[RMDB]
RNA sequence: GGGAACGACUCGAGUAGAGUCGAAAAAACUAAUGAGCCUUAUACCAGAGCUUGCUCUUACUAUUAUAACAGAUGUUAUAGCUGGAAUUAUCUUGUAUUUCGUCUGCAAAUGGCUAGAUGGUAAGAACAUUAAGCCAAUGUUCGCAUUGGCUUAAUGAAAAGAAACAACAACAACAAC
Reactivity to DMS in 0.01 (KOAc 150mM, MgCl2 10mM, bicine 150mM(pH8.5), 24C), signal-to-noise 4, nucleotides 027 to 126: a060a050c120u010a080a080u000g010a040g020c020c020u010u010a100u010a180c070c040a120g000a090g010c040u000u000g020c110u000c020u000u000a030c040u000a040u010u000a070u000a110a100c010a050g000a040u000g020u010u000a020u000a030g010c020u010g000g010a070a150u000u010a040u010c030u000u000g010u000a050u010u010u000c030g020u000c010u010g010c050a020a070a070u010g010g020c110u000a040g010a020u000g010g010u000a010a030g000a050a230
Reactivity to 2A3 in 0.01 (KOAc 150mM, MgCl2 10mM, bicine 150mM(pH8.5), 24C), signal-to-noise 3, nucleotides 027 to 126: a000a000c150u190a130a090u130g030a010g040c010c010u170u090a150u050a150c020c060a030g000a030g080c010u000u040g020c020u030c000u010u020a020c020u010a040u130u030a070u040a100a070c010a010g050a050u050g010u050u020a030u010a060g150c050u010g020g010a030a040u190u040a130u190c020u040u020g000u030a020u030u020u020c000g020u010c000u010g000c020a100a100a050u100g060g030c040u070a040g000a060u010g050g000u020a030a010g000a040a000
Structure probing data (DMS and 2A3) for a 177-nucleotide construct.
In probing experiments dimethyl sulfate is read out at A N1 and C N3, which are open when not base-paired.
For 2A3 the reverse transcriptase was SuperScript II with manganese.
Source: RMDB library RFMREP, as collected in RNAgym.
The 2A3 profile rests on 1,871 reads.
DMS adducts were read by reverse transcription with MarathonRT.
Reactivities are given for positions 27 through 126.